[RMDB]
RNA sequence: GGGAACGACUCGAGUAGAGUCGAAAAACGGGCAGUGGCGAUGGCAACGCGGCAGCCGCAGGGUCGACUUCUUCGCAGCCGCAACAGACGGGCGACGGGCAAAGAGGGGUCCUCGUUCUGUUGGAAGUGAUAUAUGCCCUUUCGAGGGCAUAUAUCAAAAAGAAACAACAACAACAAC
Reactivity to 2A3 in 0.01 (KOAc 150mM, MgCl2 10mM, bicine 150mM(pH8.5), 24C), signal-to-noise 7, nucleotides 027 to 126: a020c040g000g020g000c030a060g030u050g090g010c030g050a070u060g040g010c020a050a020c040g000c020g050g000c010a010g030c010c020g000c030a030g030g030g010u040c010g030a050c020u060u020c000u070u050c060g000c050a020g030c020c020g010c000a000a010c000a020g030a010c010g030g000g020c040g010a020c030g040g050g010c070a100a110a010g070a060g010g040g020g010u000c010c000u010c010g030u110u040c010u020g010u010u000g020g020a090a060g070
Reactivity to DMS in 0.01 (KOAc 150mM, MgCl2 10mM, bicine 150mM(pH8.5), 24C), signal-to-noise 4, nucleotides 027 to 126: a100c050g010g020g020c020a050g000u020g010g010c010g010a080u020g000g030c050a060a080c140g010c030g000g000c050a080g010c070c040g010c050a080g000g000g000u020c040g000a080c090u000u020c020u000u010c050g000c050a080g000c030c050g030c030a050a030c060a020g000a050c030g000g010g020c140g010a030c050g010g000g000c080a040a040a110g000a110g030g010g020g010u010c000c020u000c030g000u010u010c010u000g020u000u000g000g030a080a090g020

Structure probing data (2A3 and DMS) for a 177-nucleotide construct. The RNA was probed in 150 mM KOAc, 10 mM MgCl2 and 150 mM bicine (pH 8.5) at 24 C. 2A3 adducts were read by reverse transcription with SuperScript II with manganese.